An RNA of 177 nucleotides, treated with DMS and 2A3 and read out base by base. For DMS the reverse transcriptase was MarathonRT. It was measured as part of the RMDB library OK2TRN.

[RMDB]
RNA sequence: GGGAACGACUCGAGUAGAGUCGAAAAGACACGACGGAGACGUCGUGUCAAGUCCAGUGCGAAAGCACUGGACAAAUAAGGGAUGUUUUUCUCGCUGACUUUCAACCCCAACGAAAAAAUGUCAGCAGACCCACUAAUGAUUCGUCAUUAGUGGGUCAAAAGAAACAACAACAACAAC
Reactivity to DMS in 0.01 (KOAc 150mM, MgCl2 10mM, bicine 150mM(pH8.5), 24C), signal-to-noise 1, nucleotides 027 to 126: g000a000c000a000c040g000a000c000g030g000a280g000a220c010g040u000c010g010u040g000u000c000a010a120g000u000c000c010a000g070u000g020c000g020a130a050a130g000c000a020c020u000g000g000a000c030a010a040a070u000a100a140g020g020g020a050u000g000u000u000u000u000u000c060u000c130g040c000u010g010a010c000u000u000u000c030a090a070c010c000c000c060a040a030c210g020a000a000a010a020a030a020u010g010u010c000a010g030c010a160
Reactivity to 2A3 in 0.01 (KOAc 150mM, MgCl2 10mM, bicine 150mM(pH8.5), 24C), signal-to-noise 1, nucleotides 027 to 126: g010a000c000a000c000g010a000c000g000g070a040g020a070c000g010u010c000g000u000g000u020c000a000a000g000u000c000c000a020g000u030g020c000g130a180a020a040g010c000a010c010u020g020g020a000c000a010a070a000u150a040a050g020g000g050a060u020g080u040u090u010u020u070c020u020c080g000c000u000g000a000c000u000u080u030c050a060a130c020c000c010c070a010a070c060g070a030a010a020a020a020a020u070g020u000c010a010g000c000a000